[RMDB]
RNA sequence: GGGAACGACUCGAGUAGAGUCGAAAAUCCCUAGUCUUCGGACUAGGGAAAAGCGACGCCUGCAGCGCGCGGUCGCGGAGGGCAGGCGUCGCGCACUCGGCUAAACUUCAUGCUUCGGCAUGAAGAAGCCAUCUUUAAGGUUCGCCUUAAAGAUGGCAAAAGAAACAACAACAACAAC
Reactivity to 2A3 in 0.01 (KOAc 150mM, MgCl2 10mM, bicine 150mM(pH8.5), 24C), signal-to-noise 2, nucleotides 027 to 126: u020c000c000c010u000a000g000u000c010u020u060c300g050g000a000c000u000a010g000g000g000a030a170a010a040g000c010g000a000c020g000c020c020u040g000c040a090g050c030g030c020g070c190g200g140u300c120g000c050g060g080a130g020g120g000c010a000g000g030c000g010u000c000g010c020g000c010a030c020u040c050g090g000c060u170a120a100a090c000u020u000c000a000u010g000c000u050u060c240g090g000c010a000u010g000a000a000g000a010a000
Reactivity to DMS in 0.01 (KOAc 150mM, MgCl2 10mM, bicine 150mM(pH8.5), 24C), signal-to-noise 2, nucleotides 027 to 126: u000c000c000c000u010a010g020u000c000u000u020c160g020g000a020c000u000a000g000g010g000a000a010a050a090g030c020g020a020c020g010c000c010u010g050c040a100g000c030g030c020g040c290g010g000u010c060g050c010g030g000a120g020g010g030c030a020g000g000c000g010u000c020g010c020g050c090a020c070u000c030g010g020c140u000a100a090a070c000u000u000c000a000u010g000c000u000u000c250g010g000c010a000u000g000a000a000g020a080a040

This 177-nucleotide RNA was probed chemically with 2A3 and DMS. Conditions: 150 mM KOAc, 10 mM MgCl2 and 150 mM bicine (pH 8.5), 24 C. For DMS the reverse transcriptase was MarathonRT. Reactivities are given for positions 27 through 126.